[RMDB]
RNA sequence: GGGAACGACUCGAGUAGAGUCGAAAACCUGGCCUACAGAGUGAGUUCAUCAGCUUUGGUUGUGUGAGACCCUAACUGAGGCACAGGGGUUAAGGAUGACGGAAGGGAGCACACUUAGGGAAAAGGACCACUAAACAGACUUCGGUCUGUUUAGUGGAAAAGAAACAACAACAACAAC
Reactivity to DMS in 0.01 (KOAc 150mM, MgCl2 10mM, bicine 150mM(pH8.5), 24C), signal-to-noise 2, nucleotides 027 to 126: c010c020u000g030g010c020c010u010a050c030a030g030a140g000u010g000a080g000u000u000c030a040u000c030a050g000c030u000u000u030g030g000u000u000g020u020g040u000g000a100g000a060c000c020c020u000a180a160c040u000g000a070g010g000c030a110c050a060g000g000g010g000u000u010a050a080g030g010a080u000g030a120c090g000g020a080a060g000g030g000a110g000c080a040c150a060c110u000u000a080g000g020g000a060a030a090a080g000g020a170